Chemical mapping of a 177-nucleotide RNA with 2A3 and DMS. Source: RMDB library RFM100, as collected in RNAgym.
[RMDB]
RNA sequence: GGGAACGACUCGAGUAGAGUCGAAAAGAAAUUACCCACAUGGAGACAGCAGAAAAUGAGAAAGGAGAGAUCGUGCUGCGAAUAAUUCCAGCGAGUGCCAAGGGGCUAGUUGAGGAAUGGCUUCAUGUGCUGGCAUCAGAUUCGUCUGAUGCCAGCAAAAAGAAACAACAACAACAAC
Reactivity to 2A3 in 0.01 (KOAc 150mM, MgCl2 10mM, bicine 150mM(pH8.5), 24C), signal-to-noise 2, nucleotides 027 to 126: g150a000a070a000u180u120a160c000c000c000a020c000a000u000g000g000a000g030a020c030a000g040c060a000g040a030a100a100a050u140g020a090g050a100a070a010g090g070a060g000a000g000a010u040c020g000u060g030c000u000g000c000g030a010a050u170a120a100u120u020c000c000a030g020c040g020a030g060u140g030c020c070a130a150g000g000g080g000c030u030a030g020u020u080g040a070g010g000a100a040u070g040g000c030u020u000c000a010u030g020
Reactivity to DMS in 0.01 (KOAc 150mM, MgCl2 10mM, bicine 150mM(pH8.5), 24C), signal-to-noise 1, nucleotides 027 to 126: g040a100a110a070u000u060a080c010c000c000a150c040a110u000g010g000a020g000a100c080a120g000c070a000g000a130a050a100a140u090g000a050g010a060a120a030g000g000a130g000a160g010a010u010c030g000u020g000c000u010g000c160g000a070a250u040a020a110u000u020c020c000a010g050c050g000a070g000u000g050c040c040a070a170g010g000g000g070c060u000a030g000u000u050g000a040g000g000a050a000u010g000g020c010u020u040c000a010u000g020
Record summary
The DMS profile rests on 1,465 reads. For DMS the reverse transcriptase was MarathonRT.